[RMDB]
RNA sequence: GGGAACGACUCGAGUAGAGUCGAAAAGAUAUGGAGCCACAGGACAUGUCGGCCAUCGGAAACGAUGGUUCGACAACAGCCUGAUGGCUCCUAAGUCAAACUUUACUGUGCUUCGGCACAGUAAAGAGUGUGGUAUCACGUUCGCGUGAUACCACACAAAAGAAACAACAACAACAAC
Reactivity to DMS in 0.01 (KOAc 150mM, MgCl2 10mM, bicine 150mM(pH8.5), 24C), signal-to-noise 1, nucleotides 027 to 126: g000a030u000a060u010g000g000a010g000c000c000a030c000a010g010g000a030c150a150u030g030u000c000g010g020c000c000a000u000c000g020g010a010a000a040c000g010a020u000g000g020u000u020c010g000a000c010a030a040c220a190g000c000c000u000g000a220u000g000g010c000u000c010c000u000a000a080g000u000c000a190a150a300c010u000u000u000a010c010u000g030u010g000c000u000u010c190g050g010c000a000c000a010g020u000a000a000a000g030a110
Reactivity to 2A3 in 0.01 (KOAc 150mM, MgCl2 10mM, bicine 150mM(pH8.5), 24C), signal-to-noise 2, nucleotides 027 to 126: g000a010u000a000u060g000g000a010g010c030c020a020c000a000g010g000a070c250a300u300g010u030c010g000g000c010c000a000u030c010g020g010a030a000a000c010g000a000u000g010g000u250u300c000g020a000c000a030a020c000a010g000c010c020u020g040a100u000g010g000c000u000c000c000u020a000a000g000u000c010a070a020a020c000u050u030u000a020c010u000g000u000g050c010u070u070c300g180g000c000a000c000a000g000u000a000a000a000g000a070
An RNA of 177 nucleotides, treated with DMS and 2A3 and read out base by base. For 2A3 the reverse transcriptase was SuperScript II with manganese.